RNA sequence: GGGAACGACUCGAGUAGAGUCGAAAAGUACUGCUCGUGAAGAGGGCUGGGUCAAAGAAUCAGAUCUCGAUCACAACGUCGUAGCUAUCAAGCCUCACGGCUAAACUCGCAAGAAUUACCGGGUUUAUAAUGACCCGCUCACACACCUUAUUUGAAAGGAAUUAACGUAUUUCGAUACGUUAAUUCCAAAAGAAACAACAACAACAAC
Reactivity to DMS in 0.01 (KOAc 150mM, MgCl2 10mM, bicine 150mM(pH8.5), 24C), signal-to-noise 2, nucleotides 027 to 156: g010u000a130c030u000g010c010u010c020g050u000g000a120a140g010a080g020g000g000c010u010g000g020g040u000c030a090a120a170g010a130a040u010c070a080g000a030u010c030u020c050g010a140u000c040a110c040a080a090c080g060u000c080g040u020a060g000c020u000a140u000c140a100a140g010c020c020u000c090a130c130g020g000c040u000a050a100a050c070u010c010g000c020a100a100g000a110a120u000u000a040c110c010g010g020g000u000u000u000a100u030a100a190u010g000a030c000c010c000g010c020u000c050a050c030a100c040a030c020c030u000u010a110u010u010u000g000a090a120a230
Reactivity to 2A3 in 0.01 (KOAc 150mM, MgCl2 10mM, bicine 150mM(pH8.5), 24C), signal-to-noise 7, nucleotides 027 to 156: g050u050a070c020u030g030c010u040c050g040u050g070a120a040g050a130g080g040g000c070u200g060g010g030u040c030a040a060a080g060a060a100u090c050a050g070a130u040c050u030c060g070a100u070c050a030c070a210a080c060g010u010c010g050u070a010g000c020u050a050u300c060a130a010g000c010c020u110c030a030c020g000g000c000u020a040a020a020c010u010c010g010c060a090a090g050a210a160u160u060a070c030c020g000g020g000u000u030u030a110u030a090a110u050g000a010c000c000c000g000c000u030c010a060c000a000c000a020c020c020u100u130a150u130u170u140g180a100a050a020

Record summary
This 207-nucleotide RNA was probed chemically with DMS and 2A3. For 2A3 the reverse transcriptase was SuperScript II with manganese. It was measured as part of the RMDB library OK3TST. Conditions: 150 mM KOAc, 10 mM MgCl2 and 150 mM bicine (pH 8.5), 24 C.